[RMDB]
RNA sequence: GGGAACGACUCGAGUAGAGUCGAAAAAGAACUGCAAACGAUAAUAAUCUCUAUGUCGGUGCUCCAGCUUUAGCUGCCGCUUAAUCCGACGAGGAUUGAAGGUGUGACGGGCAACAGACCCGGAAAACGCGUAAUUAUGGUUCGCCAUAAUUACGCGAAAAGAAACAACAACAACAAC
Reactivity to 2A3 in 0.01 (KOAc 150mM, MgCl2 10mM, bicine 150mM(pH8.5), 24C), signal-to-noise 3, nucleotides 027 to 126: a000g080a050a030c050u090g000c030a040a070a040c050g040a060u020a120a020u100a030a030u100c010u010c040u170a170u220g020u020c040g050g020u040g000c010u090c090c000a000g000c000u050u090u150a010g000c000u000g050c040c020g110c020u010u100a030a030u060c010c000g010a060c080g030a000g020g000a000u000u040g030a080a040g040g000u040g010u000g080a020c010g010g000g030c010a080a050c010a150g130a200c010c010c040g080g000a020a040a000a030
Reactivity to DMS in 0.01 (KOAc 150mM, MgCl2 10mM, bicine 150mM(pH8.5), 24C), signal-to-noise 3, nucleotides 027 to 126: a040g010a110a040c090u010g000c140a100a070a090c070g000a150u020a100a080u020a040a010u030c020u030c030u000a040u030g000u000c000g000g000u010g000c010u020c300c010a000g010c000u030u050u030a120g010c000u000g020c140c080g000c070u000u010a120a120u020c010c000g000a070c030g000a170g000g000a030u000u000g020a060a050g000g020u000g020u000g030a160c030g010g000g000c010a130a120c280a170g010a070c010c000c000g000g000a090a040a080a140